[RMDB]
RNA sequence: GGGAACGACUCGAGUAGAGUCGAAAAGAUAUGGAUGGUCGGGUUGCUAUGGACAUGCCUUCUGCCCUCGGAAACGAGGGUACUAAGGCAACAGCCAUAGCAAUCUCUAGCGUGCCAUCCUAAGUCACUCCAAAACACUGUUCGCAGUGUUUUGGAGAAAAGAAACAACAACAACAAC
Reactivity to DMS in 0.01 (KOAc 150mM, MgCl2 10mM, bicine 150mM(pH8.5), 24C), signal-to-noise 1, nucleotides 027 to 126: g010a070u000a300u000g000g000a000u000g010g010u000c030g000g050g000u000u000g020c000u000a000u000g040g010a070c100a300u010g020c000c000u000u000c300u000g000c020c000c000u000c000g000g000a230a150a200c020g000a020g000g000g000u000a000c150u000a020a000g000g100c000a010a000c300a100g030c010c000a000u000a000g010c010a000a000u000c000u000c140u000a100g150c270g000u000g020c000c000a010u000c000c010u000a050a080g000u000c000a100
About this RNA:
Chemical mapping of a 177-nucleotide RNA with DMS. The data come from the RNA Mapping Database (RMDB), library TTRINS. Values cover nucleotides 27 to 126. The DMS profile rests on 631 reads.